RNA sequence: GGGAACGACUCGAGUAGAGUCGAAAAACAGCGAAAGGCACAAGACUUCGAACAUUAUAGCAGUUAGUAGUUGCCUAAACUCAUUGCAAUAUAUGGGACAGUAGAGGUCGCAAGCCUAUACUGUGCGAAAAGUCGCAAGGUUUCGACCUUGCGACAAGUUACACCCUUGAUUCGUCAAGGGUGUAACAAAAGAAACAACAACAACAAC
Reactivity to DMS in 0.01 (KOAc 150mM, MgCl2 10mM, bicine 150mM(pH8.5), 24C), signal-to-noise 2, nucleotides 027 to 156: a080c030a060g060c000g000a030a120a060g010g000c000a100c070a170a180g000a050c010u000u020c050g020a100a100c050a130u020u010a100u000a140g020c040a140g000u000u000a120g020u000a090g000u000u010g000c000c000u000a040a060a140c000u000c000a020u000u000g030c000a090a200u000a100u010a010u000g000g040g010a170c020a070g000u000a040g010a050g000g000u000c000g010c300a090a240g010c000c000u000a080u000a000c010u000g000u000g000c010g000a030a020a080a120g010u000c000g000c000a000a040g030g020u000u000u000c280g000a070c010c000u000u000g000c000g000a000c000a000a030
Reactivity to 2A3 in 0.01 (KOAc 150mM, MgCl2 10mM, bicine 150mM(pH8.5), 24C), signal-to-noise 4, nucleotides 027 to 156: a000c030a010g030c050g100a090a080a070g030g020c020a040c040a070a060g060a060c040u030u030c090g060a110a050c040a140u140u180a100u190a090g050c060a020g010u020u100a030g010u060a010g030u090u100g020c000c010u050a070a030a000c010u000c010a010u030u010g020c020a060a000u020a000u000a010u140g030g010g030a010c010a010g000u010a000g000a000g010g000u070c030g040c130a040a050g010c000c000u000a000u000a000c000u000g020u030g000c010g030a020a060a020a060g000u000c000g000c010a000a000g030g010u000u050u150c210g120a050c000c000u000u000g000c000g000a000c000a000a000